[RMDB]
RNA sequence: GGGAACGACUCGAGUAGAGUCGAAAAGACAAGGAGGCUCACUGGCAGAGUCUUCUCUGACACCAUUGAUGCUGGGGAAUGGGAGCUAACAGAGUUCAAAAGCCUGAAGACAUGCAAGCUCACGAACGAUACAUAUCUGAUUCGUCAGAUAUGUAUCAAAAGAAACAACAACAACAAC
Reactivity to DMS in 0.01 (KOAc 150mM, MgCl2 10mM, bicine 150mM(pH8.5), 24C), signal-to-noise 9, nucleotides 027 to 126: g010a160c110a080a060g020g020a080g010g010c020u000c010a080c100u010g010g020c080a130g000a030g010u000c030u000u000c010u000c090u000g000a110c090a160c040c020a060u010u010g010a080u010g010c030u000g000g000g000g000a080a070u000g010g010g000a080g010c050u000a060a130c090a060g000a120g010u000u010c060a040a130a110a110g010c040c050u000g000a050a050g010a080c090a060u000g010c070a050a060g000c030u000c040a080c180g000a070a110c170
Reactivity to 2A3 in 0.01 (KOAc 150mM, MgCl2 10mM, bicine 150mM(pH8.5), 24C), signal-to-noise 6, nucleotides 027 to 126: g050a020c040a020a040g040g010a010g020g010c010u010c030a070c080u090g150g010c090a050g010a020g010u000c000u050u010c010u000c020u010g020a020c010a040c060c020a020u020u170g090a090u160g040c040u060g000g010g000g040a040a020u070g070g020g010a020g000c000u010a050a030c010a060g050a010g060u040u050c040a090a110a050a060g030c000c010u050g040a040a010g050a050c020a020u080g010c030a030a050g010c010u010c020a050c040g040a090a010c080